The record gives the reactivity of an RNA of 207 nucleotides to DMS and 2A3. High DMS reactivity at an A or C suggests that its Watson-Crick edge is free. The RNA was probed in 150 mM KOAc, 10 mM MgCl2 and 150 mM bicine (pH 8.5) at 24 C. DMS adducts were read by reverse transcription with MarathonRT.
[RMDB]
RNA sequence: GGGAACGACUCGAGUAGAGUCGAAAACUCACCCGCCUCCCGGUUGAGCAUGGCUGUCUGGUUGCAACACUGCUAAUUGCAAAAACGCGGUUGUUGGGGGGGAAUGUGUGUGUGGAAGGGGUGUACUUGGUGGUGCCUAGAUGAUUAGGAGAGUUGCCUAUAGACAUUCCUUCGGGAAUGUCUAUAGAAAAGAAACAACAACAACAAC
Reactivity to DMS in 0.01 (KOAc 150mM, MgCl2 10mM, bicine 150mM(pH8.5), 24C), signal-to-noise 1, nucleotides 027 to 156: c010u010c040a060c040c010c050g000c030c030u000c020c010c010g050g010u000u000g000a090g050c030a110u000g010g010c000u000g000u000c040u010g020g020u000u010g010c040a080a060c050a110c040u010g000c050u010a060a140u010u010g010c080a040a050a080a050a090c080g020c020g000g040u000u000g020u000u000g010g000g010g010g010g020g010a060a060u010g020u010g000u000g030u000g030u010g010g000a060a100g000g000g000g020u010g000u010a010c080u010u010g020g010u000g000g030u000g000c010c050u000a100g010a090u000g010a120u000u000a050g000g020a110g000a100g010u000u000g010c040
Reactivity to 2A3 in 0.01 (KOAc 150mM, MgCl2 10mM, bicine 150mM(pH8.5), 24C), signal-to-noise 2, nucleotides 027 to 156: c020u000c030a060c010c000c030g010c000c010u010c000c010c000g020g000u010u060g000a010g010c060a080u060g020g030c010u010g020u040c020u020g090g000u070u020g000c010a040a030c020a010c100u070g010c010u070a150a060u150u090g030c030a030a050a010a040a050c060g020c010g070g000u040u050g010u010u000g030g000g010g000g000g000g020a070a080u080g060u020g010u010g000u010g000u020g060g020a020a020g030g000g000g000u030g020u030a010c030u020u040g000g000u000g000g010u010g010c000c000u020a030g020a110u130g030a050u150u190a050g080g060a030g090a020g090u300u160g020c060